Source information
The record gives the reactivity of an RNA of 207 nucleotides to 2A3 and DMS. It was measured as part of the RMDB library RNAMAK. The RNA was probed in 150 mM KOAc, 10 mM MgCl2 and 150 mM bicine (pH 8.5) at 24 C.
RNA sequence: GGGAACGACUCGAGUAGAGUCGAAAAUUGAUAUUCGUAUCAAAUAUUACCUUUGUGAAGGAUGAUACAGGGAGAAAUCCACGACCCAUUGGGUCGUGAAGAUUUCUUUGAUCUGUAUCCACUCCUUCACUCUGGUCUCUACCAUUUUCGAAUGGAAUCAUAUAAUGCCUUUCGAGGCAUUAUAUGAAAAAGAAACAACAACAACAAC
Reactivity to 2A3 in 0.01 (KOAc 150mM, MgCl2 10mM, bicine 150mM(pH8.5), 24C), signal-to-noise 5, nucleotides 027 to 156: u030u010g000a010u020a040u060u100c170g030u030a010u040c010a030a080a050u240a130u200u210a050c010c000u010u010u000g000u010g000a000a000g010g000a000u190g000a000u030a010c000a000g010g000g010a010g010a000a000a010u000c000c000a000c020g000a000c010c030c170a230u180u300g030g000g010u000c010g010u020g010a020a040g010a000u000u030u050c000u200u050u020g020a020u010c000u000g000u000a000u000c010c010a050c040u000c000c000u000u000c000a000c000u000c000u010g000g040u000c020u010c020u100a110c010c000a010u020u030u150u100c100g130a020a120u100g010g050a040a030
Reactivity to DMS in 0.01 (KOAc 150mM, MgCl2 10mM, bicine 150mM(pH8.5), 24C), signal-to-noise 2, nucleotides 027 to 156: u010u000g010a030u000a020u000u000c150g040u000a080u010c010a050a090a130u010a050u010u000a090c000c000u010u000u030g000u000g000a020a000g000g030a110u010g000a040u000a020c010a030g020g010g020a040g010a010a000a020u000c010c010a040c100g010a020c000c010c030a280u000u000g110g090g030u010c000g000u000g010a020a070g010a030u000u000u000c010u000u010u010g010a060u010c010u000g000u000a010u000c010c070a100c220u000c000c000u000u000c010a010c000u000c020u000g020g000u000c060u000c050u000a140c020c010a060u000u020u000u030c130g030a060a040u000g000g010a190a260